[RMDB]
RNA sequence: GGGAACGACUCGAGUAGAGUCGAAAAGAAAACAAGUACCGAGAACAUUGUUUUCGCUGCUUGGCGUUGCCGUUUUGUGUUGCAGUUGGUUGGGUAACGCCGCAAAUACCAACGGCAAAGACAGAUAGAUUACUAGUCACUUCGGUGACUAGUAAUCAAAAGAAACAACAACAACAAC
Reactivity to 2A3 in 0.01 (KOAc 150mM, MgCl2 10mM, bicine 150mM(pH8.5), 24C), signal-to-noise 4, nucleotides 027 to 126: g050a010a010a000a000c010a000a010g020u020a010c040c040g000a020g010a020a020c090a300u180u300g000u030u010u000u010c000g000c030u030g000c010u010u070g010g010c000g010u000u030g010c000c000g040u030u010u160u200g160u040g030u010u050g000c020a020g000u020u020g060g000u050u150g130g000g000u050a020a000c010g030c010c020g020c030a070a130a020u190a010c000c000a000a010c000g000g000c000a040a040a020g140a020c060a050g080a040u220a030
Reactivity to DMS in 0.01 (KOAc 150mM, MgCl2 10mM, bicine 150mM(pH8.5), 24C), signal-to-noise 3, nucleotides 027 to 126: g000a030a030a160a180c000a030a000g020u000a060c300c000g040a050g000a020a000c010a160u030u040g020u000u000u010u000c000g020c170u000g010c000u010u000g000g010c060g000u000u000g000c080c030g000u000u020u030u040g010u000g000u020u010g000c030a090g010u010u000g010g030u010u010g040g000g010u010a060a040c270g000c000c020g010c110a000a030a090u040a090c000c050a000a020c030g000g030c000a020a030a060g010a110c140a070g000a070u070a010